[RMDB]
RNA sequence: GGGAACGACUCGAGUAGAGUCGAAAACAGAUGCGUUGCGGCACUUGCUGAUCGUCGUCGAUGACCCGGACUACGACCUGGGCGCAUCGCCGCUGGCGGUGGGCCGCGCGGGUGUCACCGUCGUGCACAGCGACUUGUAUUUCGAUACAAGUCGCUGAAAAGAAACAACAACAACAAC
Reactivity to 2A3 in 0.01 (KOAc 150mM, MgCl2 10mM, bicine 150mM(pH8.5), 24C), signal-to-noise 3, nucleotides 027 to 126: c040a020g100a090u190g000c020g070u100u130g010c010g010g010c010a050c130u100u140g010c000u050g040a270u040c010g070u010c000g000u000c010g020a080u090g070a040c010c000c000g010g010a070c090u160a040c100g070a090c050c060u110g020g010g010c160g000c060a020u010c000g000c060c010g190c150u170g010g000c010g020g010u030g020g080g020c020c000g040c020g020c010g030g000g060u050g040u070c020a030c020c010g060u110c010g100u050g000c030a020
Reactivity to DMS in 0.01 (KOAc 150mM, MgCl2 10mM, bicine 150mM(pH8.5), 24C), signal-to-noise 3, nucleotides 027 to 126: c090a140g010a080u000g010c030g010u020u000g030c030g020g000c020a090c080u010u000g030c030u000g000a120u010c030g000u000c050g010u000c000g000a060u000g010a190c020c030c020g000g000a070c050u000a110c150g000a040c050c030u000g000g020g000c030g000c020a000u000c000g020c030c020g010c160u010g030g020c010g000g010u000g000g000g070c000c030g020c090g010c040g010g000g020u000g020u010c050a090c030c050g000u000c080g000u000g000c100a210
This 177-nucleotide RNA was probed chemically with 2A3 and DMS. DMS adducts were read by reverse transcription with MarathonRT. 2A3 adducts were read by reverse transcription with SuperScript II with manganese. It was measured as part of the RMDB library OK2TRN.